The record gives the reactivity of an RNA of 177 nucleotides to DMS and 2A3. For DMS the reverse transcriptase was MarathonRT. The reactions ran in a buffer of 150 mM KOAc, 10 mM MgCl2 and 150 mM bicine (pH 8.5), at 24 C. Reactivities are given for positions 27 through 126. For 2A3, 2,761 sequencing reads were counted.
RNA sequence: GGGAACGACUCGAGUAGAGUCGAAAACCGCCGAACGCGCUAUGGCGCCGAUUGCGGAGACUCUCAAGACGGACGUGCUCAGCGCCGCGGAAAUGUGCGUCACCGUCGCAAGCUCGAACAUGGUGGCAGGGCUGAUACUAUUCGUAGUAUCAGCCCUAAAAGAAACAACAACAACAAC
Reactivity to DMS in 0.01 (KOAc 150mM, MgCl2 10mM, bicine 150mM(pH8.5), 24C), signal-to-noise 3, nucleotides 027 to 126: c000c000g000c020c140g030a110a060c300g010c020g010c000u000a160u050g000g010c010g040c030c000g000a140u040u010g010c070g010g000a090g000a060c150u000c010u020c140a070a080g000a060c100g000g010a120c010g040u000g040c050u010c120a110g020c080g000c040c040g000c060g050g020a090a140a080u030g000u000g000c000g010u000c060a060c060c030g040u000c040g010c080a050a180g000c080u040c030g010a070a040c090a060u010g000g010u000g030g010c090
Reactivity to 2A3 in 0.01 (KOAc 150mM, MgCl2 10mM, bicine 150mM(pH8.5), 24C), signal-to-noise 4, nucleotides 027 to 126: c000c000g000c010c020g070a060a040c020g050c000g000c050u080a120u300g140g000c040g000c010c010g090a090u000u150g060c010g010g020a000g030a030c010u050c000u000c130a060a050g080a090c030g000g020a030c030g010u060g070c020u020c100a030g010c020g030c030c020g000c000g000g070a040a040a100u180g020u040g030c000g010u040c030a020c100c000g030u020c000g030c060a070a040g000c040u040c050g030a070a060c040a060u130g030g010u040g040g000c040